[RMDB]
RNA sequence: GGGAACGACUCGAGUAGAGUCGAAAACUUUGAUGUUCCCUAGCCAGGGAUUGUCUUCCUCAAGUUUCUUGAUUUUCUUCUUCGCCUUCCGGAGCUCCUUCUCGAGAUCCUCAGCUUUUUUCCUUGACCCCGACUAGGUUCGCCUAGUCGAAAAGAAACAACAACAACAAC
Reactivity to 2A3 in 0.01 (KOAc 150mM, MgCl2 10mM, bicine 150mM(pH8.5), 24C), signal-to-noise 9, nucleotides 027 to 129: c050u110u070u230g080a070u110g040u040u020c000c000c000u010a040g070c050c100a030g010g000g030a050u050u130g040u010c010u050u040c020c020u070c050a080a090g020u020u060u020c030u040u090g110a200u100u050u050u020c030u050u010c000u030u040c020g040c030c000u040u030c010c010g030g010a020g020c010u030c000c000u060u040c040u020c020g050a060g000a050u030c000c010u020c010a030g020c020u050u040u020u010u030u030c010c000u030u060g120a100c000c000c000
Reactivity to DMS in 0.01 (KOAc 150mM, MgCl2 10mM, bicine 150mM(pH8.5), 24C), signal-to-noise 9, nucleotides 027 to 129: c080u030u040u040g030a070u040g010u000u000c010c010c010u000a080g030c150c120a040g030g030g000a020u010u010g010u000c050u040u020c030c010u020c090a120a120g010u010u010u000c010u020u020g020a120u030u020u010u010c020u000u000c060u020u000c050g010c060c050u030u020c030c030g020g010a140g020c100u020c010c030u000u020c040u030c050g000a120g010a030u030c030c020u000c020a050g030c060u030u000u020u010u020u020c020c040u020u040g050a190c030c010c020